Chemical mapping of a 177-nucleotide RNA with DMS and 2A3. The RNA was probed in 150 mM KOAc, 10 mM MgCl2 and 150 mM bicine (pH 8.5) at 24 C. DMS adducts were read by reverse transcription with MarathonRT. For DMS, 1,425 sequencing reads were counted. For 2A3, 2,432 sequencing reads were counted. 2A3 adducts were read by reverse transcription with SuperScript II with manganese.
RNA sequence: GGGAACGACUCGAGUAGAGUCGAAAACAAUGGAGGUUCGCCUCCAUUGAAAGCGCAACCCAUCUCAACUUCAAGCGCAGGGAAAAGAGAAAGAACGGAUAAAAAGCUACCCGUUCGCGGGUAGCAACCAAUAAUCCAACUUCGGUUGGAUUAUUGGAAAAGAAACAACAACAACAAC
Reactivity to DMS in 0.01 (KOAc 150mM, MgCl2 10mM, bicine 150mM(pH8.5), 24C), signal-to-noise 2, nucleotides 027 to 126: c000a020a010u000g010g000a010g000g000u000u010c240g030c000c000u000c010c000a000u000u000g010a070a070a120g000c050g000c110a070a110c020c010c010a140u020c040u000c110a060a070c170u000u000c110a090a110g000c060g010c030a090g000g000g000a060a050a050a120g010a060g000a050a090a080g000a090a050c120g000g000a090u010a020a060a090a100a110g000c000u000a000c000c000c000g010u000u000c170g020c020g010g010g010u000a000g010c000a000a030
Reactivity to 2A3 in 0.01 (KOAc 150mM, MgCl2 10mM, bicine 150mM(pH8.5), 24C), signal-to-noise 2, nucleotides 027 to 126: c000a000a010u000g010g000a000g030g000u060u150c180g090c060c000u000c000c000a000u000u000g000a010a000a000g020c050g010c040a060a080c020c000c020a050u040c060u010c020a080a120c050u160u080c130a210a040g040c000g000c070a040g090g040g000a020a110a070a070g050a020g010a070a080a020g050a070a000c050g070g010a040u150a190a130a020a000a010g000c010u000a000c000c010c010g010u000u070c240g010c000g020g010g000u010a000g000c000a000a000